Record summary:
Structure probing data (DMS and 2A3) for a 207-nucleotide construct. For DMS, 3,737 sequencing reads were counted. Reactivities are given for positions 27 through 156. The 2A3 profile rests on 2,807 reads. The RNA was probed in 150 mM KOAc, 10 mM MgCl2 and 150 mM bicine (pH 8.5) at 24 C. For DMS the reverse transcriptase was MarathonRT.
RNA sequence: GGGAACGACUCGAGUAGAGUCGAAAAGGACGAGCUGUCGCGUCCGAAUUAACGACAGCAACUAGCCUGUCACCAACCAGGCGAAUUAUGUUGGUGUAAUGAGGCGAAAGCCUCUAUCAGACUGAGACAUAGCAGUCGAAUUAGCUAUGUCAUUAGACACUAGUAGUAGCUUCGGCUACUACUAGUGAAAAGAAACAACAACAACAAC
Reactivity to DMS in 0.01 (KOAc 150mM, MgCl2 10mM, bicine 150mM(pH8.5), 24C), signal-to-noise 2, nucleotides 027 to 156: g020g060a030c040g000a150g030c000u010g020u000c000g050c000g000u000c080c000g020a130a110u010u000a110a150c030g020a020c000a000g010c020a070a100c160u000a220g000c060c000u020g000u000c050a150c080c050a050a050c100c010a090g000g030c020g000a050a070u000u000a120u000g050u000u000g010g020u010g020u000a060a110u000g000a000g030g000c000g020a130a140a280g020c000c000u000c000u000a060u000c100a150g010a130c020u020g000a120g000a020c000a010u000a020g040c000a090g020u000c050g000a150a260u000u000a050g030c000u000a000u000g000u000c010a190u000u000a120g000a300
Reactivity to 2A3 in 0.01 (KOAc 150mM, MgCl2 10mM, bicine 150mM(pH8.5), 24C), signal-to-noise 3, nucleotides 027 to 156: g030g000a000c000g000a010g010c010u010g000u000c000g010c030g030u000c020c000g040a030a060u160u060a140a030c000g000a010c000a000g030c000a020a000c020u000a020g020c030c000u000g050u080c010a000c010c000a010a000c000c000a000g000g020c040g020a020a070u300u210a090u080g000u010u000g040g000u020g000u010a090a040u170g000a000g000g000c000g020a090a020a000g000c000c020u000c000u000a030u030c020a000g030a020c010u020g010a000g010a020c000a000u000a000g000c000a010g020u040c100g010a070a140u140u040a130g000c010u010a000u000g010u000c010a020u000u100a020g020a000